Structure probing data (DMS and 2A3) for a 177-nucleotide construct. Source: RMDB library TTRDES, as collected in RNAgym. DMS adducts were read by reverse transcription with MarathonRT.
RNA sequence: GGGAACGACUCGAGUAGAGUCGAAAAGAUAUGGACACGGUAUGGGAGCUACCAUUCGGAAACGAAUGGAAUAGCUUUGAUCAUACGUGUCCUAAGUCAAAGUUAAACUGGUUCGCCAGUUUAACAAGUAUAUUAUGUGCUUCGGCACAUAAUAUACAAAAGAAACAACAACAACAAC
Reactivity to DMS in 0.01 (KOAc 150mM, MgCl2 10mM, bicine 150mM(pH8.5), 24C), signal-to-noise 5, nucleotides 027 to 126: g000a010u000a020u020g000g000a010c000a000c000g010g000u000a000u000g000g010g010a010g020c000u000a120c000c010a010u000u000c010g010g000a010a000a020c010g010a020a010u000g000g000a100a110u010a010g010c000u000u000u010g000a020u010c000a010u000a010c000g040u000g010u000c000c000u000a000a050g000u000c000a130a140a180g010u000u000a000a000a000c000u000g000g000u000u020c300g010c000c000a030g000u000u000u000a000a010c000a100a130
Reactivity to 2A3 in 0.01 (KOAc 150mM, MgCl2 10mM, bicine 150mM(pH8.5), 24C), signal-to-noise 4, nucleotides 027 to 126: g010a000u010a010u040g000g000a000c010a000c020g080g030u050a010u010g000g000g040a020g000c000u020a040c000c000a000u000u010c000g000g010a020a000a000c010g000a000a020u020g010g100a070a290u210a020g000c000u250u230u060g000a010u000c000a000u000a010c000g010u000g000u000c000c000u000a000a000g000u000c020a150a050a010g000u000u010a000a010a000c000u010g000g060u050u050c140g050c110c000a010g000u010u000u000a000a000c000a010a020